Conditions: 150 mM KOAc, 10 mM MgCl2 and 150 mM bicine (pH 8.5), 24 C. The record gives the reactivity of an RNA of 177 nucleotides to DMS and 2A3. For DMS the reverse transcriptase was MarathonRT. The DMS profile rests on 13,805 reads.

RNA sequence: GGGAACGACUCGAGUAGAGUCGAAAACUGGCCGACCGAAGGGAAUCAAACGCGAAUUGCCACACGUCUCACCGGAUGCGGCACCCGGGAUGAUGCCGGCACUGCUCGAUUUCUGGAUGGACGCCGACAAGAACGUAUCUUUCGAGAUACGUUCUUGAAAAGAAACAACAACAACAAC
Reactivity to DMS in 0.01 (KOAc 150mM, MgCl2 10mM, bicine 150mM(pH8.5), 24C), signal-to-noise 7, nucleotides 027 to 126: c050u010g020g010c020c040g030a140c030c000g010a300a120g010g000g020a030a030u000c020a050a110a090c160g010c040g000a100a110u040u010g010c000c010a070c190a250c070g010u010c020u010c080a200c020c000g000g000a100u030g030c080g000g020c030a040c130c000c000g010g000g000a060u030g000a050u000g010c280c170g000g000c000a030c200u010g010c030u010c150g000a050u000u000u000c010u010g000g000a220u030g000g010a270c140g000c030c020g020a220
Reactivity to 2A3 in 0.01 (KOAc 150mM, MgCl2 10mM, bicine 150mM(pH8.5), 24C), signal-to-noise 9, nucleotides 027 to 126: c030u040g020g010c060c040g070a140c010c010g020a050a030g020g000g030a010a020u020c030a040a090a090c110g020c020g080a120a170u140u060g010c010c000a070c010a010c090g010u000c010u020c070a100c020c010g010g020a060u180g070c060g070g000c040a040c010c010c000g000g010g000a050u180g000a010u040g080c120c060g000g000c010a020c050u090g000c000u030c080g030a030u000u020u000c000u010g030g010a040u090g040g000a010c010g000c010c000g020a030